[RMDB]
RNA sequence: GGGAACGACUCGAGUAGAGUCGAAAACUAUUCGCUGUUAUAUCAACUUUAUCGCCACUAAUUUUCACGCCAUCUUUAUCAAUAGUAUGUGAAGUAAUCGCCCCAUUUUCGUCAUACCUUAAAUAGACCUACGCAUGGGAUUCGUCCCAUGCGUAGGAAAAGAAACAACAACAACAAC
Reactivity to DMS in 0.01 (KOAc 150mM, MgCl2 10mM, bicine 150mM(pH8.5), 24C), signal-to-noise 1, nucleotides 027 to 126: c030u000a060u020u000c050g020c100u000g020u000u000a060u020a110u000c060a050a020c050u010u000u000a020u010c130g020c030c060a050c100u020a050a070u000u000u020u000c100a090c100g020c040c000a010u000c050u010u000u000a070u000c040a050a030u000a050g020u000a020u000g000u000g000a020a050g010u010a050a050u000c160g020c040c020c000c050a130u000u000u000u000c050g020u000c040a040u000a050c040c130u000u030a030a090a110u010a050g020a230
Reactivity to 2A3 in 0.01 (KOAc 150mM, MgCl2 10mM, bicine 150mM(pH8.5), 24C), signal-to-noise 1, nucleotides 027 to 126: c000u030a090u040u110c020g020c010u010g060u120u040a070u000a010u240c010a000a130c020u030u120u170a040u100c000g030c030c010a040c010u120a060a120u060u060u050u100c010a000c040g030c020c010a100u040c070u080u150u110a120u080c040a010a010u030a070g090u000a010u120g010u010g000a030a000g040u090a030a160u110c050g040c010c000c000c000a010u080u040u000u040c040g050u060c000a000u000a150c000c000u080u080a020a100a020u070a050g010a020

Structure probing data (DMS and 2A3) for a 177-nucleotide construct. The reactions ran in a buffer of 150 mM KOAc, 10 mM MgCl2 and 150 mM bicine (pH 8.5), at 24 C.